The record gives the reactivity of an RNA of 177 nucleotides to 2A3 and DMS. The data come from the RNA Mapping Database (RMDB), libraries RFM100 and RFMREP.

[RMDB]
RNA sequence: GGGAACGACUCGAGUAGAGUCGAAAAUGUUGCUCAUUCAACUGGUUAUGAUUGCGUUGCUAACUGGCAAAUAUUUUCGCUCAUAACAUCUGGAAUGAUGCCAAAAGAAAGGGUGCCUAUCGUCCACUUAUUUAUCGCUUUUCGAAGCGAUAAAUAAAAAAGAAACAACAACAACAAC
Reactivity to 2A3 in 0.01 (KOAc 150mM, MgCl2 10mM, bicine 150mM(pH8.5), 24C), signal-to-noise 9, nucleotides 027 to 126: u170g030u060u100g000c010u000c010a020u020u000c030a090a080c100u080g060g010u000u010a000u000g040a100u080u250g010c030g040u050u020g000c020u050a270a300c130u170g040g000c020a020a070a020u190a140u070u110u080u140c010g000c000u000c010a000u000a020a010c010a060u050c050u100g050g020a000a010u020g000a040u160g020c030c030a030a080a040a020g180a030a080a030g080g010g020u060g030c020c020u090a100u130c030g020u020c010c010a020c020
Reactivity to DMS in 0.01 (KOAc 150mM, MgCl2 10mM, bicine 150mM(pH8.5), 24C), signal-to-noise 9, nucleotides 027 to 126: u010g010u020u010g010c030u000c010a020u000u000c020a080a170c100u010g000g020u000u000a010u010g010a040u030u040g020c020g020u010u010g010c020u010a140a160c260u030g010g000c010a040a060a110u030a120u030u000u020u030c040g020c020u010c010a010u000a010a020c020a060u030c100u010g010g000a020a020u000g000a030u020g020c030c070a060a050a110a120g000a070a070a100g000g010g010u000g010c040c040u010a070u020c070g000u000c040c040a100c150